RNA sequence: GGGAACGACUCGAGUAGAGUCGAAAAGAAAGAAAGAAAGAAAGGUAUGAAGUCCUAUUCACACAUGAUAGGAUAAACUUCAUAUUGAUCGUGUAUGUGCUAACGCACAUACACGAAUGCGCAUGCAGAACUGCAUGCAUGAACAUAAUGUGUGCAAGCUGACGACGAGGUUCGCCUCGUCGUCAGCAAAAGAAACAACAACAACAAC
Reactivity to 2A3 in 0.01 (KOAc 150mM, MgCl2 10mM, bicine 150mM(pH8.5), 24C), signal-to-noise 2, nucleotides 027 to 156: g150a040a080a010g030a020a070a000g030a050a080a010g080a100a050a000g070g000u000a000u000g020a000a000g020u020c000c000u010a000u060u070c070a000c000a000c000a020u050g000a000u010a010g000g000a060u080a070a060a000c000u000u020c010a000u030a000u070u090g040a080u000c000g000u000g000u010a000u000g020u010g000c090u100a120a080c120g000c000a000c010a000u000a000c000a000c020g000a000a000u050g000c060g000c000a000u000g000c000a000g020a300a040c140u070g000c000a000u000g000c000a000u070g010a020a010c120a030u180a140a010u060g020u000g000u020g010c060a010a060
Source: RMDB library OK3TST, as collected in RNAgym. Structure probing data (2A3) for a 207-nucleotide construct. Reactivities are rounded to 0.1 and cut off at 0 and 3. Reactivities are given for positions 27 through 156.